[RMDB]
RNA sequence: GGGAACGACUCGAGUAGAGUCGAAAAACAACACGCUUCGGCGUGUUGUCGACGGAGGAAGCUGAGGACGCGCUUGUGCCGCAGCAGGGAAGCCCAGCGUAAAUCAGAGGUGAUUCGUCACCUCUAAAGUAGGAACAAUGUUCGCAUUGUUCCUACUAAAAGAAACAACAACAACAAC
Reactivity to 2A3 in 0.01 (KOAc 150mM, MgCl2 10mM, bicine 150mM(pH8.5), 24C), signal-to-noise 4, nucleotides 027 to 126: a000c000a000a000c000a020c000g000c010u040u080c200g160g000c000g000u010g000u000u010g000u010c000g030a050c060g010g040a050g050g060a110a040g030c020u010g060a080g030g030a070c020g080c000g030c100u080u120g080u160g020c020c020g020c020a010g000c030a020g010g040g020a070a030g000c000c000c000a020g020c040g100u120a040a050a080u140c040a030g000a000g020g010u010g020a020u010u070c170g030u020c080a010c000c000u000c010u000a010a020
Reactivity to DMS in 0.01 (KOAc 150mM, MgCl2 10mM, bicine 150mM(pH8.5), 24C), signal-to-noise 5, nucleotides 027 to 126: a020c000a000a010c000a000c000g020c000u010u010c200g050g010c000g020u010g000u000u000g010u000c040g000a110c090g010g010a110g020g010a130a130g010c010u000g010a060g000g010a060c060g020c160g000c140u000u010g010u010g010c020c030g010c050a050g000c050a080g000g000g010a110a110g000c030c010c030a100g010c120g000u010a040a070a090u010c160a020g010a010g010g010u000g000a040u010u010c190g000u010c000a010c000c000u010c000u010a010a010